Structure probing data (DMS and 2A3) for a 207-nucleotide construct.
Values cover nucleotides 27 to 156.
For 2A3 the reverse transcriptase was SuperScript II with manganese.
RNA sequence: GGGAACGACUCGAGUAGAGUCGAAAAGAAAGUUCAAGCAAGCUAGCCGGCAAAAAAGCAAACUUGACCACCAAGGAUAAAAGAGAUCUUAUCCAAGGAUGCAAUAGAUAAUCUCACUUUUGACACCAAAACAGGGAGUAGUUCGCUACUCCCUGAAUACUGAAUUCAAGUUCGCUUGAAUUCAGUAAAAAGAAACAACAACAACAAC
Reactivity to DMS in 0.01 (KOAc 150mM, MgCl2 10mM, bicine 150mM(pH8.5), 24C), signal-to-noise 3, nucleotides 027 to 156: g000a050a080a100g000u010u000c020a060a080g030c020a060a210g040c000u010a260g030c040c010g010g000c020a010a030a100a130a150a040g000c020a050a150a030c000u000u000g000a190c120c030a150c030c020a040a300g010g000a030u000a010a010a020a050g000a220g000a140u000c030u000u000a030u000c010c000a040a270g010g010a090u010g030c050a050a100u000a060g010a100u000a040a120u000c020u000c040a070c060u000u000u000u010g010a170c040a080c040c030a040a040a050a160c030a030g010g010g010a030g050u000a010g000u010u010c270g010c000u010a020c000u000c000c000c000u000g000a010a030
Reactivity to 2A3 in 0.01 (KOAc 150mM, MgCl2 10mM, bicine 150mM(pH8.5), 24C), signal-to-noise 4, nucleotides 027 to 156: g060a030a020a010g020u050u040c050a020a010g010c020a070a030g010c040u050a010g050c010c050g100g000c150a060a050a080a030a020a010g040c030a060a040a030c020u020u030g030a030c010c000a010c020c000a050a030g010g000a010u010a020a040a030a020g120a010g000a030u040c020u030u020a010u020c010c000a010a030g020g000a040u040g010c000a020a100u030a110g070a050u110a110a050u090c020u030c050a020c040u040u000u060u110g090a080c070a060c090c050a080a060a080a040c010a000g000g010g010a000g000u000a000g010u010u060c130g000c080u000a000c000u030c020c000c000u000g000a000a000
For DMS the reverse transcriptase was MarathonRT. The DMS profile rests on 6,301 reads. Source: RMDB library M2RFPK, as collected in RNAgym. The reactions ran in a buffer of 150 mM KOAc, 10 mM MgCl2 and 150 mM bicine (pH 8.5), at 24 C. Reactivities are rounded to 0.1 and cut off at 0 and 3.